[RMDB]
RNA sequence: GGGAACGACUCGAGUAGAGUCGAAAAUGGAAUUAGGUAGUGGAUAGUUACACAACCUCGUGAUAUACUAAUCGCUUUGCUAUACAUUUUAAGAGUGAAUUUUAUGGUUAAGAGCAAAUUUUAUGGUAUGUGAAUUAUGUCUCAAUAAACAGAAAAAAUCAGUGGAUAAUUUCGAUUAUCCACUGAUAAAAGAAACAACAACAACAAC
Reactivity to DMS in 0.01 (KOAc 150mM, MgCl2 10mM, bicine 150mM(pH8.5), 24C), signal-to-noise 2, nucleotides 027 to 156: u000g020g000a130a100u000u010a040g020g030u000a060g010u000g000g010a150u010a090g000u000u020a100c030a030c020a140a110c060c060u020c080g000u010g010a090u000a060u000a050c040u000a050a140u000c020g000c060u010u000u000g020c040u000a150u000a050c030a090u000u020u000u000a090a160g010a130g020u000g010a070a080u000u000u010u000a040u000g010g010u000u010a090a210g040a070g020c040a020a030a110u000u010u010u010a080u020g000g020u000a060u000g000u000g030a090a050u000u000a060u010g010u000c050u000c020a060a120u000a070a080a110c050a130g000a010a040a080a080a110
Reactivity to 2A3 in 0.01 (KOAc 150mM, MgCl2 10mM, bicine 150mM(pH8.5), 24C), signal-to-noise 4, nucleotides 027 to 156: u050g010g030a060a070u090u030a070g020g020u020a040g020u030g030g010a010u010a040g050u060u070a030c040a010c000a030a190c050c050u120c060g020u020g060a050u040a020u010a090c020u030a030a060u030c010g000c020u050u060u080g030c010u040a030u010a090c000a020u030u040u060u120a090a030g080a010g050u060g060a080a060u080u090u110u120a050u120g030g010u030u060a050a010g010a000g020c020a040a020a080u060u120u060u070a080u060g040g000u070a050u090g030u010g030a020a010u060u030a040u070g050u030c020u000c040a020a060u160a070a050a030c050a030g300a180a130a020a150a060
Structure probing data (DMS and 2A3) for a 207-nucleotide construct. The DMS profile rests on 3,750 reads. DMS adducts were read by reverse transcription with MarathonRT. The RNA was probed in 150 mM KOAc, 10 mM MgCl2 and 150 mM bicine (pH 8.5) at 24 C.